[RMDB]
RNA sequence: GGGAACGACUCGAGUAGAGUCGAAAACAAACAAACCAACCACACUCAGAGCCCCAAUAAAUUGAAGAAACCUCAUCUCUUCAAUGGAGAUGCAGAGGACGCAUUCGUCCAAAGGGCUCUGACAAAACAUGACGUAUCUCUUCGGAGAUACGUCAUGAAAAGAAACAACAACAACAAC
Reactivity to 2A3 in 0.01 (KOAc 150mM, MgCl2 10mM, bicine 150mM(pH8.5), 24C), signal-to-noise 7, nucleotides 027 to 126: c070a020a120a030c040a080a070a030c040c010a020a050c050c040a070c030a010c080u020c010a000g000a000g000c010c010c020c040a040a010u190a110a060a070u120u130g060a050a050g050a070a080a020c020c050u050c040a050u010c000u010c010u150u130c070a040a110u210g010g000a010g010a000u010g000c050a040g060a070g090g050a010c030g010c070a160u230u260c040g040u000c030c000a000a080a000g000g000g000c000u000c000u000g000a000c000a000a090a000a010
Reactivity to DMS in 0.01 (KOAc 150mM, MgCl2 10mM, bicine 150mM(pH8.5), 24C), signal-to-noise 3, nucleotides 027 to 126: c120a110a190a040c150a070a130a120c080c080a110a150c090c090a040c080a060c250u010c000a000g000a040g000c010c000c000c170a090a150u030a040a180a070u000u040g000a110a020g020a070a160a120c090c080u040c110a030u020c030u000c000u010u010c140a120a070u020g010g000a070g000a000u000g010c160a060g000a060g030g030a010c130g000c260a150u000u020c050g010u020c020c050a060a120a210g000g010g000c000u010c010u000g000a020c140a100a010a110a060